Chemical mapping of a 177-nucleotide RNA with 2A3 and DMS. The data come from the RNA Mapping Database (RMDB), library OK2TRN. Reactivities are given for positions 27 through 126. DMS adducts were read by reverse transcription with MarathonRT. The DMS profile rests on 1,889 reads. The RNA was probed in 150 mM KOAc, 10 mM MgCl2 and 150 mM bicine (pH 8.5) at 24 C. Values are in units of 0.01, from 0 to 300, in steps of 10.
RNA sequence: GGGAACGACUCGAGUAGAGUCGAAAAAAAAAGAGUGCACUUCGUAAGUGCCCUUAUAUAAAUAACGAGUUUGGUCAACCAAUUUUUUGACAUGUAUCACAAAUUUGAAUAGAUGUAUUACAUCAACCCAAAUAGUAGCAUUCGUGCUACUAUUUGGAAAAGAAACAACAACAACAAC
Reactivity to 2A3 in 0.01 (KOAc 150mM, MgCl2 10mM, bicine 150mM(pH8.5), 24C), signal-to-noise 3, nucleotides 027 to 126: a000a000a000a000a000g060a010g000u070g010c000a020c020u060u060c080g110u100a020a030g000u000g000c000c030c000u050u030a110u000a010u000a220a130a050u140a070a020c020g000a020g040u040u080u080g070g020u050c030a010a060c060c030a050a070u130u120u000u020u030u070g020a030c040a050u130g080u090a060u120c030a020c050a080a100a080u060u080u130g080a120a070u110a110g040a030u020g010u030a180u070u190a020c010a020u000c010a020a110c000
Reactivity to DMS in 0.01 (KOAc 150mM, MgCl2 10mM, bicine 150mM(pH8.5), 24C), signal-to-noise 3, nucleotides 027 to 126: a040a050a110a040a100g000a040g000u010g000c000a010c010u000u000c300g010u000a240a070g000u000g020c000c020c000u000u000a050u000a080u010a070a090a070u020a110a100c050g000a040g000u010u000u010g010g000u000c040a050a060c300c110a050a000u000u010u000u000u020u020g000a030c070a090u000g010u000a060u000c130a280c050a010a040a100u000u000u030g020a050a080u030a080g000a060u000g000u000a120u000u000a060c000a020u010c070a060a110c230